[RMDB]
The record gives the reactivity of an RNA of 177 nucleotides to DMS. DMS adducts were read by reverse transcription with MarathonRT. For DMS, 3,927 sequencing reads were counted.

RNA sequence: GGGAACGACUCGAGUAGAGUCGAAAAGAUAUGGACCGCACUAGCAACAGCUAUUCCAAGAACAUGGAUCAUCGGAAACGAUGAUCCAUGUUCUUGGACUGUAGACAUGCUAAACGGUCCUAAGUCAUCGUAUUUACAUGUUCGCAUGUAAAUACGAAAAAGAAACAACAACAACAAC
Reactivity to DMS in 0.01 (KOAc 150mM, MgCl2 10mM, bicine 150mM(pH8.5), 24C), signal-to-noise 4, nucleotides 027 to 126: g010a060u010a300u010g000g020a030c000c000g000c100a140c300u000a010g000c000a070a080c290a200g000c070u020a040u000u000c000c000a020a020g000a000a000c000a000u000g010g000a010u010c000a010u000c010g000g000a100a110a270c010g000a020u010g000a000u010c000c000a000u000g000u010u000c000u000u000g010g020a000c300u010g000u000a010g000a050c150a130u000g000c000u000a020a110a200c010g000g010u000c000c000u010a020a060g010u010c040a130